Source: RMDB library RFMREP, as collected in RNAgym.
This 177-nucleotide RNA was probed chemically with 2A3 and DMS.
[RMDB]
RNA sequence: GGGAACGACUCGAGUAGAGUCGAAAAAGCUAUGGAGUGUGACAAUGGUGUUUGUUUCCUUUCUUUCAAACGCCAUUAUCACACUAAAUAGCUAAAACGAAUCGACGACCUUCGGGUCGUCGAUUCGGUAACACUAAAUCUUCGGAUUUAGUGUUACAAAAGAAACAACAACAACAAC
Reactivity to 2A3 in 0.01 (KOAc 150mM, MgCl2 10mM, bicine 150mM(pH8.5), 24C), signal-to-noise 2, nucleotides 027 to 126: a000g010c020u010a010u020g020g010a050g000u010g000u000g010a000c010a010a010u000g000g030u000g030u010u000u000g060u020u070u110c060c050u090u180u160c060u010u110u020c020a000a000a000c010g000c010c000a000u000u000a000u000c000a000c000a000c000u000a000a000a000u000a000g000c000u000a020a010a000a020c010g000a000a000u000c010g010a000c020g000a010c000c000u040u080c220g080g010g050u000c010g040u000c000g000a010u020u000c000g010
Reactivity to DMS in 0.01 (KOAc 150mM, MgCl2 10mM, bicine 150mM(pH8.5), 24C), signal-to-noise 1, nucleotides 027 to 126: a040g000c000u010a010u000g010g040a040g010u000g010u010g000a020c020a010a000u000g000g010u000g010u000u000u000g010u010u010u010c120c110u010u010u010c100u000u000u000c020a010a000a000c000g020c000c000a000u010u000a040u000c000a000c000a000c000u000a010a050a000u000a000g020c000u000a050a050a100a300c000g000a010a010u000c000g010a020c000g000a010c000c000u000u010c190g020g020g020u000c000g000u000c000g000a000u010u000c000g010
Values cover nucleotides 27 to 126. For 2A3, 4,970 sequencing reads were counted.